[RMDB]
This 207-nucleotide RNA was probed chemically with DMS and 2A3. For DMS the reverse transcriptase was MarathonRT. The RNA was probed in 150 mM KOAc, 10 mM MgCl2 and 150 mM bicine (pH 8.5) at 24 C. The data come from the RNA Mapping Database (RMDB), library M2RFPK. For 2A3, 741 sequencing reads were counted.
RNA sequence: GGGAACGACUCGAGUAGAGUCGAAAAAGUUCGCGCUUCCGUGAAACGCGAAAAUCGGCCGGUGGCUGCAAGUCGCAUCGCAAAACCGCGGCAAGUGGAGUUAGCGAGAGGAGGCUGGGUUUUGGCUAGAACACACGGUACUUCGGUACCGUGUGAAUCACCAUUUCAACUUCGGUUGAAAUGGUGAAAAAGAAACAACAACAACAAC
Reactivity to DMS in 0.01 (KOAc 150mM, MgCl2 10mM, bicine 150mM(pH8.5), 24C), signal-to-noise 1, nucleotides 027 to 156: a100g010u010u010c000g050c040g030c030u000u020c020c170g040u010g060a150a010a060c030g000c040g010a030a010a140a150u000c120g000g010c020c000g000g040u000g010g010c050u000g070c060a060a040g050u020c030g050c000a200u000c030g020c020a080a090a090a110c000c020g010c010g000g000c140a040a160g030u000g020g000a160g000u000u020a180g010c020g050a080g000a120g000g020a050g020g010c030u000g000g020g000u000u010u010u000g040g020c040u000a160g020a160a130c000a020c000a000c050g000g010u000a010c040u000u010c280g000g000u010a020c000c000g000u030g020u000g020a000a110
Reactivity to 2A3 in 0.01 (KOAc 150mM, MgCl2 10mM, bicine 150mM(pH8.5), 24C), signal-to-noise 1, nucleotides 027 to 156: a000g030u050u000c020g010c000g000c040u060u010c050c060g150u110g050a060a040a010c010g000c000g000a020a000a000a120u070c020g030g010c000c000g040g030u030g050g000c040u140g100c120a070a000g040u000c020g010c090a060u040c010g000c050a120a090a040a060c000c000g020c020g120g010c290a160a010g000u010g050g030a060g020u050u120a000g040c000g000a020g000a020g050g020a010g050g000c010u010g010g010g030u070u020u060u060g010g010c020u000a070g070a210a020c000a000c000a000c000g000g020u000a000c000u000u100c240g070g000u000a000c000c000g000u000g000u000g000a000a000